[RMDB]
RNA sequence: GGGAACGACUCGAGUAGAGUCGAAAAUGAAAAGUGCCUCGAAAUAAACAUGAAGAUCAAGAACAAGAUACAAACGGCAAGUAUCGUUCGAUCCAUGAAAUAAACGAGAGCACAAACCCGAAAAAAACAUACCAAGAGUAUUCGUACUCUUGGUAUGAAAAGAAACAACAACAACAAC
Reactivity to 2A3 in 0.01 (KOAc 150mM, MgCl2 10mM, bicine 150mM(pH8.5), 24C), signal-to-noise 5, nucleotides 027 to 126: u090g020a030a020a020a060g010u000g000c010c000u000c000g020a300a300a130u030a020a020a000c000a000u020g060a130a080g010a010u020c070a100a090g010a010a010c030a160a090g000a010u000a020c020a020a230a010c070g150g000c080a100a050g000u000a000u010c000g000u000u000c000g000a000u000c000c000a010u010g010a300a300a010u010a000a000a000c010g010a000g030a040g010c000a000c000a000a010a010c000c000c010g100a090a020a010a000a000a000a010
Reactivity to DMS in 0.01 (KOAc 150mM, MgCl2 10mM, bicine 150mM(pH8.5), 24C), signal-to-noise 3, nucleotides 027 to 126: u010g010a080a060a160a180g010u000g010c000c000u000c010g030a010a120a060u000a110a180a070c010a010u000g000a180a100g020a030u000c010a110a180g020a020a010c020a140a110g010a020u000a010c010a020a120a150c170g000g000c150a090a090g000u000a000u000c010g000u000u000c010g000a020u000c000c010a010u000g000a010a100a010u000a060a100a020c000g000a000g000a110g020c010a020c000a000a070a160c010c000c010g000a010a000a040a110a080a060a080